[RMDB]
RNA sequence: GGGAACGACUCGAGUAGAGUCGAAAACACUUUCGAUAGUUAGUCACUAGCGGAAGCUCAGGAAGAGCAGCUUUGGUCUCUCAGCACUUUAAUCCUGCUUCUCGUUCCCACUUAAUUUCGCAGUUUAUCAUAUUAACCUCUUCGGAGGUUAAUAUGAAAAAGAAACAACAACAACAAC
Reactivity to DMS in 0.01 (KOAc 150mM, MgCl2 10mM, bicine 150mM(pH8.5), 24C), signal-to-noise 4, nucleotides 027 to 126: c130a170c030u000u000u000c020g000a050u000a010g000u000u000a150g010u010c230a170c000u000a020g000c000g000g010a030a050g010c070u010c090a050g010g000a080a050g020a060g020c080a070g010c050u000u000u010g010g010u000c060u000c070u000c070a080g000c040a080c030u000u000u010a070a100u000c040c020u000g000c250u000u010c040u000c010g000u000u000c000c010c000a130c170u010u000a040a090u000u000u000c070g000c120a080g020u000u000u000a080
Reactivity to 2A3 in 0.01 (KOAc 150mM, MgCl2 10mM, bicine 150mM(pH8.5), 24C), signal-to-noise 2, nucleotides 027 to 126: c020a000c000u040u050u040c030g030a040u010a020g020u080u050a020g090u160c020a000c040u000a010g000c000g000g010a010a010g020c050u020c040a020g010g100a070a070g010a000g070c090a030g000c040u070u080u090g100g090u060c030u000c000u010c090a040g020c020a020c030u020u060u160a050a060u080c010c000u010g020c020u070u050c020u010c000g000u010u000c010c010c000a010c010u040u110a070a160u040u070u040c070g030c080a080g020u010u070u110a130
Structure probing data (DMS and 2A3) for a 177-nucleotide construct. The RNA was probed in 150 mM KOAc, 10 mM MgCl2 and 150 mM bicine (pH 8.5) at 24 C. For 2A3 the reverse transcriptase was SuperScript II with manganese.